This 177-nucleotide RNA was probed chemically with 2A3 and DMS. The DMS profile rests on 19,132 reads. Values cover nucleotides 27 to 126. It was measured as part of the RMDB library M2PK50. Reactivities are rounded to 0.1 and cut off at 0 and 3.

RNA sequence: GGGAACGACUCGAGUAGAGUCGAAAAGCAAGAUGCUUCGGCAUCUUGCAGUCGUAGCGCGAUCGACAGAAUUACAGCUAUGUCCAACGAGGAAGAGCGCGCACAUCAUCCCUUUCGAGGGAUGAAACUAGUUAUAACCAUUCGUGGUUAUAACUAGAAAAGAAACAACAACAACAAC
Reactivity to 2A3 in 0.01 (KOAc 150mM, MgCl2 10mM, bicine 150mM(pH8.5), 24C), signal-to-noise 9, nucleotides 027 to 126: g000c000a010a000g000a000u010g000c010u060u140c240g110g000c000a000u000c000u000u000g000c000a000g030u020c050g030u050a040g000c010g000c000g010a030u090c010g030a030c010a060g150a110a040u210u130a130c040a070g050c080u130a070u200g070u030c030c030a090a070c150g070a100g100g050a070a050g030a030g100c010g000c000g020c010a020c010a050u040c000a000u000c000c000c000u010u030u040c170g090a020g000g000g000a000u000g000a010a000a000
Reactivity to DMS in 0.01 (KOAc 150mM, MgCl2 10mM, bicine 150mM(pH8.5), 24C), signal-to-noise 9, nucleotides 027 to 126: g010c000a000a010g000a010u000g010c000u000u010c220g030g020c000a000u000c000u000u000g010c000a050g010u010c040g010u000a080g020c010g010c020g000a090u000c040g000a070c050a090g000a120a100u000u010a100c200a110g000c090u010a060u000g010u000c030c060a080a130c140g000a120g000g010a070a080g000a090g000c010g010c020g010c010a120c220a150u000c010a000u000c000c000c000u000u000u020c150g010a020g000g000g000a000u000g000a020a070a150